[RMDB]
RNA sequence: GGGAACGACUCGAGUAGAGUCGAAAAGAUUAGGCAGAUAACAUCUAUUACGCGUCUUGCCACUGUAUUGUAAAGUAAACAACAAGAUAUAAGUUUAAUACACCUACGCGACAAGAUGAAUCAGCAAUAUUUUGUCCUUGUUCGCAAGGACAAAAUAAAAAGAAACAACAACAACAAC
Reactivity to 2A3 in 0.01 (KOAc 150mM, MgCl2 10mM, bicine 150mM(pH8.5), 24C), signal-to-noise 1, nucleotides 027 to 126: g120a060u170u190a060g200g000c020a050g000a030u020a070a090c010a010u000c010u040a120u050u130a040c020g000c010g020u000c080u140u090g000c050c010a070c060u040g060u010a010u070u020g120u170a030a090a140g080u050a060a060a070c080a020a030c030a090a000g050a030u050a010u050a180a100g010u010u000u020a030a000u050a010c030a010c020c020u020a000c000g000c020g010a040c020a050a010g010a000u030g010a010a030u020c020a010g030c040a030a020
Reactivity to DMS in 0.01 (KOAc 150mM, MgCl2 10mM, bicine 150mM(pH8.5), 24C), signal-to-noise 2, nucleotides 027 to 126: g020a200u000u000a080g010g030c010a070g020a060u000a110a080c100a160u000c010u000a070u010u020a130c100g000c020g000u000c090u010u010g010c060c030a080c160u000g000u000a030u000u000g010u010a070a090a080g010u000a030a030a060c070a060a080c070a110a040g010a100u010a090u000a100a120g000u000u020u000a020a010u010a050c100a030c060c050u010a040c020g020c010g000a050c150a060a030g010a040u000g020a110a050u000c040a050g000c070a090a080
The record gives the reactivity of an RNA of 177 nucleotides to 2A3 and DMS. The DMS profile rests on 1,224 reads. Reactivities are given for positions 27 through 126. For 2A3, 1,135 sequencing reads were counted. It was measured as part of the RMDB library M2PK90.